[RMDB]
RNA sequence: GGGAACGACUCGAGUAGAGUCGAAAAGAUAUGGACGCAGAUGGGAGCUUUGCGUCGGAAACGACGCUUGAGCGACGAUCAUCGCGUCCUAAGUCAAAAGCCGUCUAAUCUUCGGAUUAGACGGCAACAUGUACAUGAUGUUCGCAUCAUGUACAUGAAAAGAAACAACAACAACAAC
Reactivity to 2A3 in 0.01 (KOAc 150mM, MgCl2 10mM, bicine 150mM(pH8.5), 24C), signal-to-noise 6, nucleotides 027 to 126: g010a000u010a000u040g000g000a000c030g010c100a150g010a030u000g010g010g000a020g000c000u030u040u020g000c010g000u000c000g000g010a000a000a000c000g000a000c020g030c030u080u130g090a020g010c010g250a300c020g000a010u000c000a000u000c010g000c000g000u000c000c000u000a000a000g000u000c010a000a020a050a180g000c000c000g000u000c000u000a010a010u000c020u050u130c300g100g000a000u000u000a000g000a000c000g010g000c010a000a000
Reactivity to DMS in 0.01 (KOAc 150mM, MgCl2 10mM, bicine 150mM(pH8.5), 24C), signal-to-noise 6, nucleotides 027 to 126: g000a010u000a000u010g000g000a010c010g020c010a090g020a020u000g000g010g000a020g020c000u000u000u000g000c000g020u000c000g020g000a000a010a020c010g010a010c000g000c000u000u010g010a020g030c000g020a100c300g000a010u000c000a010u000c000g000c000g020u000c000c000u000a000a060g000u010c010a130a110a140a130g010c000c000g010u000c000u000a010a000u000c000u000u010c240g020g000a020u000u000a010g000a010c000g000g010c010a000a020
Chemical mapping of a 177-nucleotide RNA with 2A3 and DMS.
It was measured as part of the RMDB library TTRDES.
High DMS reactivity at an A or C suggests that its Watson-Crick edge is free.
The DMS profile rests on 20,587 reads.
Reactivities are given for positions 27 through 126.
The RNA was probed in 150 mM KOAc, 10 mM MgCl2 and 150 mM bicine (pH 8.5) at 24 C.